[RMDB]
RNA sequence: GGGAACGACUCGAGUAGAGUCGAAAAGGCAACUCAGCGGCGGAGCCAUCCAGCGAAGGAAGCAUCUGGUCCGUUGCUAAUCCUUCGGAUGUAAUCAUUGGCGGCGCUUCUGCGCCCCGGGGCUGGUCACUGUAAUUCUCUUCGGAGAAUUACAGUGAAAAGAAACAACAACAACAAC
Reactivity to DMS in 0.01 (KOAc 150mM, MgCl2 10mM, bicine 150mM(pH8.5), 24C), signal-to-noise 1, nucleotides 027 to 126: g020g010c050a080a070c090u000c050a070g010c050g030g010c040g020g000a100g020c040c030a050u000c100c050a100g000c010g050a070a020g030g000a090a070g040c010a060u000c060u000g000g010u000c080c110g010u000u020g020c020u010a080a090u000c030c010u000u000c020g040g000a060u000g000u010a070a130u020c150a100u000u000g000g050c020g060g020c010g000c020u010u020c150u020g010c060g030c010c000c000c000g000g010g030g010c110u000g030g010u030
Reactivity to 2A3 in 0.01 (KOAc 150mM, MgCl2 10mM, bicine 150mM(pH8.5), 24C), signal-to-noise 1, nucleotides 027 to 126: g030g010c010a040a040c050u020c070a040g040c030g040g050c000g010g060a030g010c000c000a020u010c000c000a010g090c010g060a030a010g020g010a010a010g010c000a000u030c030u070g130g050u100c060c050g040u020u000g000c000u050a030a110u030c000c000u020u010c030g020g020a080u070g050u100a080a060u090c080a140u030u120g020g030c040g020g010c010g000c030u180u150c090u180g030c000g060c000c000c000c000g000g030g000g020c030u060g030g010u020